[RMDB]
RNA sequence: GGGAACGACUCGAGUAGAGUCGAAAAAGAUCGAUCACUCCGAGUUCAACGUCGGUGUAGAGGAAGAAGUUGAAGGAAAAAGGUUCGAUAGAGGCAGGCCUAACGGAAAGAGAGCCGCAAAAAACGCACUAGUCGCAUGGUUCGCCAUGCGACUAGUAAAAGAAACAACAACAACAAC
Reactivity to 2A3 in 0.01 (KOAc 150mM, MgCl2 10mM, bicine 150mM(pH8.5), 24C), signal-to-noise 2, nucleotides 027 to 126: a000g080a100u180c060g020a020u010c050a040c030u000c020c040g030a040g080u070u000c020a040a050c070g110u050c080g000g040u120g030u150a060g010a010g050g070a100a000g020a090a100g090u080u110g030a000a060g010g120a020a070a000a050a050g010g000u090u040c060g020a080u090a110g050a060g090g080c050a040g070g000c000c000u020a140a050c060g060g080a010a080a000g090a000g000a050g050c000c020g020c060a020a020a020a020a020a020c130g000c020
Reactivity to DMS in 0.01 (KOAc 150mM, MgCl2 10mM, bicine 150mM(pH8.5), 24C), signal-to-noise 1, nucleotides 027 to 126: a010g010a060u000c010g000a100u000c030a030c040u000c050c190g000a190g000u000u000c040a080a140c020g030u000c060g020g000u000g000u050a000g000a040g070g020a030a150g020a090a180g030u000u000g000a120a100g000g020a050a090a060a050a030g040g050u010u020c050g000a130u030a160g030a100g000g020c130a030g000g000c000c060u030a080a000c060g020g000a030a090a090g000a030g000a120g000c020c070g000c070a030a130a050a100a100a090c080g020c300

Structure probing data (2A3 and DMS) for a 177-nucleotide construct. The reactions ran in a buffer of 150 mM KOAc, 10 mM MgCl2 and 150 mM bicine (pH 8.5), at 24 C. For 2A3, 767 sequencing reads were counted. As a SHAPE reagent, 2A3 marks flexible, mostly unpaired nucleotides at the ribose 2'-OH.